Structure probing data (DMS and 2A3) for a 207-nucleotide construct. DMS adducts were read by reverse transcription with MarathonRT. Values cover nucleotides 27 to 156. 2A3 adducts were read by reverse transcription with SuperScript II with manganese. It was measured as part of the RMDB library OK3TST. 2A3 is a SHAPE reagent: it acylates the 2'-hydroxyl of flexible nucleotides of all four kinds. The RNA was probed in 150 mM KOAc, 10 mM MgCl2 and 150 mM bicine (pH 8.5) at 24 C.
RNA sequence: GGGAACGACUCGAGUAGAGUCGAAAAUACUCAUAUGAUCAUGGCCGCCGUGCGUCGCCAUUUGCUGCGGACGCAGCAAAGACCUCAUGUCAUUAUCGGAGCAGCCGAGCCCCCUAGCGUCACCGAAUGUGUGAAGGCAUUGGCGCAGGAAAAACGCCCACCUAACUACAUUCGUGUAGUUAGGUGGAAAAGAAACAACAACAACAAC
Reactivity to DMS in 0.01 (KOAc 150mM, MgCl2 10mM, bicine 150mM(pH8.5), 24C), signal-to-noise 1, nucleotides 027 to 156: u010a070c030u000c020a200u020a130u020g000a070u000c100a060u000g050g030c060c020g000c010c000g050u010g040c080g000u000c040g010c020c000a190u010u000u000g050c080u000g030c010g080g000a110c220g140c020a040g010c030a010a050a030g020a020c020c050u000c100a070u010g030u000c100a070u000u030a130u000c000g010g000a070g020c060a150g000c050c030g010a110g000c000c010c020c010c020u000a060g010c040g010u000c020a120c020c030g000a060a040u010g030u000g050u030g000a150a090g020g010c050a130u000u000g020g000c000g000c040a170g000g010a120a050a050a040a100c030g030c080
Reactivity to 2A3 in 0.01 (KOAc 150mM, MgCl2 10mM, bicine 150mM(pH8.5), 24C), signal-to-noise 2, nucleotides 027 to 156: u140a020c030u060c070a060u120a080u280g050a060u140c020a060u050g060g000c010c020g080c030c070g080u080g070c030g020u080c030g010c030c040a050u030u010u030g050c050u060g000c080g110g170a130c190g000c000a000g020c000a010a020a020g020a040c010c040u060c060a030u060g070u010c030a030u040u120a040u090c010g000g010a010g010c050a020g040c070c020g030a050g170c030c010c000c000c000u000a050g000c000g010u010c000a000c050c060g110a110a020u100g040u030g000u030g100a070a040g060g020c030a070u010u080g010g000c010g000c000a000g000g000a020a090a000a040a000c080g060c100